RNA sequence: GGGAACGACUCGAGUAGAGUCGAAAACAGCUAGCCCUCACGUGCAUCUCAGGGAGCGCGUCGUUCAGGACACGGACCUGAAUGGGCGGAACCGUCGGAGUGUCCUUGAGGCACUGGCCGAGUGCACCGAGGUGCGUUCCUUCGGGGGCGUACUUCGAAAAGAAACAACAACAACAAC
Reactivity to DMS in 0.01 (KOAc 150mM, MgCl2 10mM, bicine 150mM(pH8.5), 24C), signal-to-noise 1, nucleotides 027 to 126: c160a000g000c100u010a100g030c200c010c000u050c090a070c130g010u000g050c020a110u120c190u000c300a300g070g090g020a300g000c100g030c000g000u050c090g040u000u000c000a040g000g010a110c120a140c270g000g040a090c000c050u000g040a030a020u020g000g140g000c020g020g050a300a300c090c040g000u030c140g050g010a030g000u000g010u000c000c000u040u030g010a060g010g000c020a010c000u000g000g040c000c070g000a050g000u000g010c000a030c020
Reactivity to 2A3 in 0.01 (KOAc 150mM, MgCl2 10mM, bicine 150mM(pH8.5), 24C), signal-to-noise 3, nucleotides 027 to 126: c040a000g040c020u070a040g010c030c010c000u020c020a060c060g010u030g000c000a150u040c100u000c170a160g020g000g000a170g120c080g000c000g130u160c000g000u000u000c000a020g000g030a040c040a040c270g100g150a080c000c020u000g000a030a020u220g200g000g000c000g050g050a140a080c020c000g120u140c020g030g050a020g020u020g010u000c010c000u100u200g040a150g020g000c010a000c010u030g040g030c020c010g020a010g010u030g000c000a010c020
This 177-nucleotide RNA was probed chemically with DMS and 2A3. The data come from the RNA Mapping Database (RMDB), library OK1LIB. DMS adducts were read by reverse transcription with MarathonRT. Reactivities are given for positions 27 through 126. Conditions: 150 mM KOAc, 10 mM MgCl2 and 150 mM bicine (pH 8.5), 24 C. For 2A3, 7,490 sequencing reads were counted. The DMS profile rests on 1,777 reads.